An RNA of 207 nucleotides, treated with DMS and 2A3 and read out base by base.
2A3 adducts were read by reverse transcription with SuperScript II with manganese.
It was measured as part of the RMDB library OK3TST.
The RNA was probed in 150 mM KOAc, 10 mM MgCl2 and 150 mM bicine (pH 8.5) at 24 C.

[RMDB]
RNA sequence: GGGAACGACUCGAGUAGAGUCGAAAACUCGCCGGCAUCACUUGGCUUCAAUGGGAUGGUGGUGACGAUGGUGGUAGGCUUGCCGUCAGAGUCCUUGGUCGUGAUGUGGGAGACGAGGUCUGUCUCGAAGUCACCGUUGCCCUUGUCGAUCGUCGUGACUUCAACGAAUUUUCGAAUUCGUUGAAGUAAAAGAAACAACAACAACAAC
Reactivity to DMS in 0.01 (KOAc 150mM, MgCl2 10mM, bicine 150mM(pH8.5), 24C), signal-to-noise 2, nucleotides 027 to 156: c030u000c010g020c050c040g020g010c030a060u010c030a070c030u000u020g020g000c050u000u000c080a070a140u010g030g020g010a090u000g010g020u010g030g020u030g010a050c030g020a120u030g010g000u000g010g000u000a070g010g000c030u000u000g000c030c040g040u010c040a120g000a160g010u000c020c050u000u010g040g030u010c100g000u010g010a050u040g010u000g030g020g010a100g010a040c040g000a090g020g000u020c040u020g030u000c020u010c050g010a110a300g010u000c010a050c020c000g000u000u010g000c010c040c110u000u000g010u000c010g010a180u010c090g010u000c040g020u000g010
Reactivity to 2A3 in 0.01 (KOAc 150mM, MgCl2 10mM, bicine 150mM(pH8.5), 24C), signal-to-noise 6, nucleotides 027 to 156: c010u010c030g010c040c020g040g020c030a050u030c010a060c070u110u110g040g020c000u130u090c090a120a130u220g020g000g050a070u090g050g140u070g020g010u040g010a020c020g040a050u140g050g060u060g020g040u030a040g050g050c060u050u070g080c040c010g030u020c020a020g010a030g170u040c020c000u050u110g100g020u110c050g060u060g080a100u080g060u160g040g060g010a060g000a020c010g010a020g040g030u020c050u050g040u020c010u010c040g070a100a020g010u010c000a010c030c020g030u050u070g020c000c000c000u010u030g010u020c050g020a090u020c030g040u010c030g020u080g080